[RMDB]
RNA sequence: GGGAACGACUCGAGUAGAGUCGAAAAGAUAUGGAUAGAACCUUCGAUGAGAUGGACUCGGAAACGAGUCCCAUCGAGAAGGUCCUAUCCUAAGUCAAACAUCGCUGACCUUCGGGUCAGCGAUGAACAAUAGCUUGGACUUCGGUCCAAGCUAUUGAAAAGAAACAACAACAACAAC
Reactivity to DMS in 0.01 (KOAc 150mM, MgCl2 10mM, bicine 150mM(pH8.5), 24C), signal-to-noise 2, nucleotides 027 to 126: g010a010u000a030u010g010g000a030u000a000g010a030a010c000c000u010u000c000g020a230u020g010a030g000a000u010g010g000a030c000u020c000g070g010a010a010a020c000g000a000g010u000c150c070c060a010u000c000g000a010g000a000a010g010g010u000c020c010u000a000u000c000c000u000a000a050g000u010c010a180a180a300c010a010u000c000g040c000u000g010a020c010c010u000u020c300g030g010g030u000c010a000g020c030g000a000u000g010a050a170
Reactivity to 2A3 in 0.01 (KOAc 150mM, MgCl2 10mM, bicine 150mM(pH8.5), 24C), signal-to-noise 1, nucleotides 027 to 126: g040a010u030a000u060g000g000a000u000a000g010a010a010c050c000u000u000c040g300a300u300g060a000g000a010u000g000g000a000c000u020c000g000g000a000a010a000c010g010a010g000u000c040c090c040a000u010c000g100a130g000a030a000g000g000u010c000c000u020a000u000c000c000u020a000a000g000u000c000a040a160a050c010a020u010c000g000c060u020g000a000c000c040u070u100c300g080g010g010u050c030a010g000c000g000a000u000g010a010a020